[RMDB]
RNA sequence: GGGAACGACUCGAGUAGAGUCGAAAACCUACUCAAUACGUCCUCGUCGUACAGAACGGUAACAUGUGUUCCGAACAUCCGCGCUUGGGUAUACGAGUAUACACCUUACCCAACCCUCGCCAACGGGAGUGCAUCCACGAGUUCGCUCGUGGAUGAAUAAAGCAAAAGUCUUCGGACUUUUGCUUUAAAAAGAAACAACAACAACAAC
Reactivity to DMS in 0.01 (KOAc 150mM, MgCl2 10mM, bicine 150mM(pH8.5), 24C), signal-to-noise 2, nucleotides 027 to 156: c030c000u010a060c020u010c040a030a080u000a070c060g010u030c010c020u030c040g020u010c060g050u010a150c040a140g020a110a160c020g000g000u000a080a090c060a130u010g020u010g000u010u010c060c030g000a140a090c040a070u020c000c000g040c070g050c040u010u020g080g020g050u010a040u000a060c070g000a210g010u020a090u000a120c110a160c110c060u000u000a020c010c000c000a080a090c030c030c010u000c070g080c080c040a070a090c050g010g030g030a100g000u010g020c020a030u000c000c010a030c010g040a040g000u010u000c300g040c000u000c000g020u000g000g000a010u000g000a020a130
Reactivity to 2A3 in 0.01 (KOAc 150mM, MgCl2 10mM, bicine 150mM(pH8.5), 24C), signal-to-noise 1, nucleotides 027 to 156: c010c000u010a050c020u030c030a000a190u070a110c040g070u040c000c050u060c010g080u050c000g010u010a080c050a060g080a040a030c050g060g030u120a070a030c090a180u240g160u060g010u130u000c020c020g000a050a000c080a110u090c030c020g080c010g010c110u060u020g000g000g050u020a020u020a080c070g010a010g060u000a030u030a040c090a100c030c020u100u050a040c000c020c010a000a050c020c010c010u010c010g080c030c040a050a000c010g000g000g010a060g060u120g030c000a000u000c000c000a000c000g000a010g010u060u060c170g080c080u000c000g020u000g000g000a000u000g000a000a000